[RMDB]
RNA sequence: GGGAACGACUCGAGUAGAGUCGAAAAGAUAUGGAUGGUGUGUCGCAUCGAUCAACGGGUCGGAAACGACCCUGGGUUGGGAGCGACCACCAUCCUAAGUCAAAGUCGCUCACUUCGGUGAGCGACAUCAGUGAUGAUUGUUCGCAAUCAUCACUGAAAAAGAAACAACAACAACAAC
Reactivity to DMS in 0.01 (KOAc 150mM, MgCl2 10mM, bicine 150mM(pH8.5), 24C), signal-to-noise 4, nucleotides 027 to 126: g010a030u000a180u020g000g000a020u010g000g030u000g020u010g020u000c010g030c000a300u000c140g010a000u010c010a030a060c100g010g000g000u000c000g010g000a060a040a100c010g010a010c000c000c010u010g010g020g010u000u000g000g020g000a040g020c000g010a020c000c000a000c010c000a000u010c000c000u000a010a050g010u000c030a130a110a140g010u000c010g010c010u010c000a010c000u000u010c200g030g010u000g000a010g010c000g000a000c000a010
Reactivity to 2A3 in 0.01 (KOAc 150mM, MgCl2 10mM, bicine 150mM(pH8.5), 24C), signal-to-noise 2, nucleotides 027 to 126: g010a000u000a010u050g000g000a010u000g000g000u010g050u060g000u000c000g020c010a140u300c110g020a030u020c000a050a030c050g000g000g020u010c010g010g000a000a000a010c000g000a010c030c010c020u040g020g060g020u040u020g030g030g010a170g000c000g000a000c000c000a000c000c000a000u000c000c000u010a000a010g000u000c000a020a020a150g010u000c000g000c010u000c000a020c000u080u140c300g140g000u000g020a000g010c000g000a000c000a000
An RNA of 177 nucleotides, treated with DMS and 2A3 and read out base by base. The RNA was probed in 150 mM KOAc, 10 mM MgCl2 and 150 mM bicine (pH 8.5) at 24 C. For 2A3, 10,676 sequencing reads were counted.